[RMDB]
RNA sequence: GGGAACGACUCGAGUAGAGUCGAAAAGAAAGAAAGAAAGAACUCUGUAAAGUGAGGGAUUGCCUAGACCAGGUCGGCGGGCCUGCUCCAGUUUCCUUCGCUCUGCUCAACGGGCAGACCGCCACAAAAAACGCGUGGCUGUUCGCAGCCACGCGAACAUGAUACCCUUCUUCGGAAGGGUAUCAUGAAAAGAAACAACAACAACAAC
Reactivity to 2A3 in 0.01 (KOAc 150mM, MgCl2 10mM, bicine 150mM(pH8.5), 24C), signal-to-noise 1, nucleotides 027 to 156: g030a000a080a010g010a040a050a000g030a040a100a030g020a040a010c050u050c040u130g050u230a100a130a040g070u040g010a020g020g020g010a080u090u190g000c020c000u020a030g030a060c000c060a020g000g050u060c080g010g050c000g010g020g030c030c000u000g000c000u010c020c010a050g010u020u080u050c010c000u050u060c040g040c040u070c010u030g030c010u020c090a090a100c060g000g000g020c020a010g020a050c010c000g010c050c000a050c040a030a110a000a010a010a000c010g000c020g000u000g000g000c000u030g030u030u080c190g000c080a000g000c000c000a000c000g010c000g000a000a000